[RMDB]
RNA sequence: GGGAACGACUCGAGUAGAGUCGAAAAAGGCACUCCAUACCCUACUCCCACUCAAUACGUCCCCGUCGUACAGAAUGGUAACAUAUCUCUCCAAAUAUCUGAGCUUGGGUAUACGGGGAAACCCAACAAAAGCAAUUGUGGUUCGCCACAAUUGCAACCUAUGUCAAGAGUUCGCUCUUGACAUAGGAAAAGAAACAACAACAACAAC
Reactivity to DMS in 0.01 (KOAc 150mM, MgCl2 10mM, bicine 150mM(pH8.5), 24C), signal-to-noise 2, nucleotides 027 to 156: a090g010g020c020a060c040u000c040c040a200u000a060c040c020c050u010a140c060u000c040c030c010a110c040u010c070a140a070u000a030c030g000u000c010c020c000c030g030u000c020g010u000a160c080a190g000a090a100u000g010g020u010a120a130c040a050u000a100u020c040u010c010u000c020c040a120a140a120u000a080u010c010u010g000a130g020c100u000u000g000g000g000u000a190u000a060c040g000g000g000g050a060a040a070c000c000c010a030a100c050a020a070a050a180g040c010a000a010u000u000g020u010g000g040u000u000c300g020c040c000a000c000a000a010u000u000g000c000a000a030
Reactivity to 2A3 in 0.01 (KOAc 150mM, MgCl2 10mM, bicine 150mM(pH8.5), 24C), signal-to-noise 7, nucleotides 027 to 156: a000g050g000c050a020c040u060c030c000a040u080a100c010c010c010u020a050c040u030c000c010c000a020c040u110c080a070a110u040a050c020g050u070c010c000c000c010g020u030c010g010u030a050c040a080g110a120a100u050g040g030u100a120a020c050a090u210a170u100c080u010c030u040c110c040a110a130a090u200a170u120c140u140g050a020g070c090u020u010g000g000g000u020a020u010a020c010g000g000g000g000a000a030a000c000c000c000a000a010c010a020a100a010a010g000c000a000a000u000u000g010u010g020g040u030u060c180g020c040c000a000c000a000a000u000u000g000c000a000a010
Conditions: 150 mM KOAc, 10 mM MgCl2 and 150 mM bicine (pH 8.5), 24 C. An RNA of 207 nucleotides, treated with DMS and 2A3 and read out base by base. The data come from the RNA Mapping Database (RMDB), library M2RFPK. For 2A3, 7,173 sequencing reads were counted.